An RNA of 207 nucleotides, treated with DMS and 2A3 and read out base by base. The reactions ran in a buffer of 150 mM KOAc, 10 mM MgCl2 and 150 mM bicine (pH 8.5), at 24 C. 2A3 is a SHAPE reagent: it acylates the 2'-hydroxyl of flexible nucleotides of all four kinds.
[RMDB]
RNA sequence: GGGAACGACUCGAGUAGAGUCGAAAACUAGGGGGUAUUCCGGUGUGGGAUACUUAGUAAUAUGCAACGCUAAUUGCAUAAGAUUGUACGACGGAAUUUACAGUCUUGGUUUUUCAAACCUGAAACUUGUGGUAGUACGCGUUCGCGCGUACUACAAACUUAUGGCGUUGUUCGCAACGCCAUAAGUAAAAGAAACAACAACAACAAC
Reactivity to DMS in 0.01 (KOAc 150mM, MgCl2 10mM, bicine 150mM(pH8.5), 24C), signal-to-noise 1, nucleotides 027 to 156: c010u000a080g010g000g000g010g020u010a050u000u000c020c000g000g000u020g080u000g020g000g010a070u000a020c060u010u000a040g000u000a070a200u000a140u010g010c000a020a050c080g000c170u000a070a150u000u010g020c010a050u010a030a030g010a070u000u000g010u000a010c070g050a060c010g000g020a040a110u000u010u000a010c000a000g000u000c000u010u000g000g020u000u020u010u020u020c130a120a080a120c010c000u000g000a160a080a120c110u000u020g020u000g000g030u000a040g010u000a000c010g030c010g050u000u000c300g030c040g060c000g020u030a000c000u010a000c000a010a060
Reactivity to 2A3 in 0.01 (KOAc 150mM, MgCl2 10mM, bicine 150mM(pH8.5), 24C), signal-to-noise 2, nucleotides 027 to 156: c020u050a010g000g010g010g000g030u010a010u020u000c000c010g130g060u120g050u150g020g050g000a010u070a080c000u050u060a010g010u050a020a090u060a030u120g010c040a110a010c070g020c150u140a130a090u060u010g000c030a030u030a030a010g010a020u030u090g210u160a030c030g020a000c010g060g060a030a020u140u080u040a060c000a040g070u020c020u010u020g000g040u010u020u020u070u070c090a080a090a030c030c000u080g050a030a080a110c080u080u070g120u100g130g000u000a000g000u000a000c000g040c000g030u030u040c230g000c010g000c000g100u000a000c000u000a000c000a000a000

The 2A3 profile rests on 1,133 reads.
2A3 adducts were read by reverse transcription with SuperScript II with manganese.